Conditions: 150 mM KOAc, 10 mM MgCl2 and 150 mM bicine (pH 8.5), 24 C. An RNA of 177 nucleotides, treated with 2A3 and DMS and read out base by base. For DMS the reverse transcriptase was MarathonRT. 2A3 adducts were read by reverse transcription with SuperScript II with manganese. The 2A3 profile rests on 1,574 reads. In probing experiments dimethyl sulfate is read out at A N1 and C N3, which are open when not base-paired. Source: RMDB library OK1LIB, as collected in RNAgym.

RNA sequence: GGGAACGACUCGAGUAGAGUCGAAAAAGUAAUGCAUCAGAACUACUACGAGACGCAAUUAUAAAUAGUAAAGAAACAGAUACAGUCGUUACAAAAGCGUUUAGUGGAAAGCUUGCACGCGGUAUCACUGAAUCUCGGUAUUCGUACCGAGAUUCAGAAAAGAAACAACAACAACAAC
Reactivity to 2A3 in 0.01 (KOAc 150mM, MgCl2 10mM, bicine 150mM(pH8.5), 24C), signal-to-noise 3, nucleotides 027 to 126: a000g230u220a100a080u100g020c000a020u130c100a080g000a030a010c030u030a000c000u000a000c010g000a010g000a040c000g000c050a040a010u120u090a060u300a190a170a040u160a030g040u080a030a170a060g070a040a120a020c070a080g040a020u090a090c060a020g220u140c020g010u060u000a010c040a020a070a010a000g010c000g020u000u070u050a020g000u020g060g010a030a000a000g020c000u040u040g000c040a000c060g050c040g040g100u060a060u050c100a060
Reactivity to DMS in 0.01 (KOAc 150mM, MgCl2 10mM, bicine 150mM(pH8.5), 24C), signal-to-noise 2, nucleotides 027 to 126: a100g040u010a050a160u000g000c040a020u040c120a080g020a050a090c060u000a020c070u000a010c070g000a110g000a000c020g040c020a080a050u000u050a130u040a080a110a090u050a090g030u000a020a040a040g010a080a020a040c170a030g000a120u040a070c170a110g010u030c040g010u000u000a000c040a080a060a050a150g000c000g000u000u010u000a150g030u000g000g000a020a030a030g000c010u000u000g000c050a040c110g000c050g000g000u010a030u000c030a130